The record gives the reactivity of an RNA of 177 nucleotides to 2A3 and DMS. It was measured as part of the RMDB library OK1LIB. The DMS profile rests on 88,120 reads. For 2A3 the reverse transcriptase was SuperScript II with manganese.
[RMDB]
RNA sequence: GGGAACGACUCGAGUAGAGUCGAAAAACUAGUAUGUACAGGGGUGAGUUGACCUGUCAUAUAGACUGCUGACCAUCAACUCACCGGUCAGCUGGAUGAUGUCCACAGAGUACGACAUCAGUACUCAGUGUAUGGAUUCGUUCGCGGAUCUAUACACAAAAGAAACAACAACAACAAC
Reactivity to 2A3 in 0.01 (KOAc 150mM, MgCl2 10mM, bicine 150mM(pH8.5), 24C), signal-to-noise 9, nucleotides 027 to 126: a000c010u020a020g080u030a070u120g070u100a010c010a020g080g030g030g050u080g060a090g030u040u040g070a060c000c030u010g000u000c010a000u060a000u010a030g090a040c050u050g010c020u020g030a020c010c010a030u070c030a030a070c040u020c070a040c020c030g000g000u000c000a000g000c010u020g020g020a060u080g020a030u070g070u030c010c010a060c060a080g030a010g030u040a020c050g070a030c100a150u100c030a050g010u020a010c010u010c030a010
Reactivity to DMS in 0.01 (KOAc 150mM, MgCl2 10mM, bicine 150mM(pH8.5), 24C), signal-to-noise 9, nucleotides 027 to 126: a150c040u010a050g020u010a020u010g000u050a010c010a020g000g010g000g020u010g010a060g020u000u000g000a050c050c020u010g000u000c000a040u010a040u010a050g000a110c060u010g010c050u010g000a030c030c110a180u030c070a030a060c090u010c060a060c130c110g000g000u000c010a020g000c000u000g000g010a090u010g010a080u020g000u010c000c030a100c210a100g000a050g010u010a020c030g010a130c170a100u040c130a090g010u000a010c010u000c010a160